[RMDB]
RNA sequence: GGGAACGACUCGAGUAGAGUCGAAAAAAGCGGCUAGGGCAUGUCGAGGACCCGUCACCUCGUUAAUCAAUGGGAAAAACGUAACUGCAAACGACGAUACGUUCGCACUGGCAGCCUAAGGGCCGCCGUCCUCUGCCUAGUUCACUGACGGGCUAGUCAAUGAAUUUUGGUUCGCCAAAAUUCAUUGAAAAGAAACAACAACAACAAC
Reactivity to DMS in 0.01 (KOAc 150mM, MgCl2 10mM, bicine 150mM(pH8.5), 24C), signal-to-noise 1, nucleotides 027 to 156: a020a030g020c000g050g010c010u020a180g030g010g000c080a060u010g010u000c010g010a050g040g010a070c000c000c010g020u000c000a130c020c000u060c000g050u000u010a090a220u010c070a050a110u000g000g020g000a070a070a030a060a040c060g000u010a050a080c060u010g020c000a060a040a140c040g010a060c050g030a160u020a130c060g020u000u000c040g000c060a060c040u000g020g020c000a110g030c090c020u040a060a100g050g050g010c000c010g020c010c000g050u000c000c020u000c100u000g010c000c020u020a110g050u000u000c070a090c050u010g000a040c030g020g020g000c000u000a090g000u000
Reactivity to 2A3 in 0.01 (KOAc 150mM, MgCl2 10mM, bicine 150mM(pH8.5), 24C), signal-to-noise 3, nucleotides 027 to 156: a010a000g030c020g050g000c010u060a100g030g050g000c070a190u050g030u050c010g000a010g000g000a010c020c000c010g010u000c000a000c000c000u020c010g070u040u090a060a040u100c090a030a060u090g050g020g000a090a050a010a000a000c050g010u050a050a030c040u100g000c090a140a150a060c100g120a030c030g040a070u040a100c020g030u030u040c060g010c080a040c060u020g000g000c010a000g000c010c010u060a060a070g110g020g000c000c010g000c000c000g000u000c000c010u080c050u040g050c010c010u060a070g020u120u160c100a060c160u040g010a000c000g000g000g000c000u010a010g020u020